Conditions: 150 mM KOAc, 10 mM MgCl2 and 150 mM bicine (pH 8.5), 24 C. An RNA of 177 nucleotides, treated with DMS and 2A3 and read out base by base. For DMS, 3,075 sequencing reads were counted. For DMS the reverse transcriptase was MarathonRT. It was measured as part of the RMDB library OK2TST.
[RMDB]
RNA sequence: GGGAACGACUCGAGUAGAGUCGAAAACGGUUUCCGGUGGUCUACACGGUGUGGGUAUCUCCGUCGUGAACGCCCUGUCUACCCGCGUGGAGGCAGACAUCAAGCGUGAUGGCAAGCACUGGCUGCACAGACCGCUUAUAUUCGUAUAAGCGGUCUGAAAAGAAACAACAACAACAAC
Reactivity to DMS in 0.01 (KOAc 150mM, MgCl2 10mM, bicine 150mM(pH8.5), 24C), signal-to-noise 3, nucleotides 027 to 126: c100g020g000u000u010u000c020c010g040g030u010g020g020u010c040u000a150c080a050c020g010g000u000g000u000g000g030g010u000a060u000c060u000c020c020g000u000c040g000u010g010a080a060c100g010c040c070c040u000g000u000c020u000a100c010c000c030g050c280g030u020g020g000a110g000g000c010a010g000a070c060a050u000c130a090a170g010c030g010u000g000a060u010g010g010c020a040a110g010c040a070c070u000g010g010c040u000g020c090a190
Reactivity to 2A3 in 0.01 (KOAc 150mM, MgCl2 10mM, bicine 150mM(pH8.5), 24C), signal-to-noise 2, nucleotides 027 to 126: c040g050g010u020u050u010c020c000g010g020u040g000g050u000c030u060a050c080a010c060g030g060u060g020u110g010g040g030u160a160u080c060u030c060c010g040u020c020g050u040g100a020a000c010g040c020c020c000u000g000u000c010u030a300c020c000c020g270c100g090u260g020g020a040g000g000c020a020g040a030c020a120u120c060a050a040g060c030g000u080g020a040u060g040g000c040a050a010g030c010a020c080u050g060g000c030u040g050c040a010